[RMDB]
RNA sequence: GGGAACGACUCGAGUAGAGUCGAAAAACUAGGGAUUAUGGCCCAUAGAUGUGUCAAUUUAUCAGAUGUGUGGAAGAAUCCUUCAGACUUAAGUGAUCCCCGGACAUGGGAAUACUUCCUGUCACUCUCCAUGUCGCGGGUUCGCCCGCGACAUGGAAAAAGAAACAACAACAACAAC
Reactivity to 2A3 in 0.01 (KOAc 150mM, MgCl2 10mM, bicine 150mM(pH8.5), 24C), signal-to-noise 1, nucleotides 027 to 126: a000c120u120a040g000g000g000a000u150u100a070u150g130g050c000c000c000a000u100a010g230a000u060g190u090g070u190c200a150a180u060u030u130a280u280c000a000g040a120u120g120u090g150u200g170g000a000a090g000a090a000u130c000c000u000u100c030a000g000a060c190u060u000a170a000g040u100g000a030u030c010c010c010c010g100g000a030c100a060u010g000g000g070a070a000u290a000c040u190u100c000c000u000g000u000c000a030c000u160c000
Chemical mapping of a 177-nucleotide RNA with 2A3.
The reactions ran in a buffer of 150 mM KOAc, 10 mM MgCl2 and 150 mM bicine (pH 8.5), at 24 C.
The data come from the RNA Mapping Database (RMDB), library OK1LIB.
Reactivities are given for positions 27 through 126.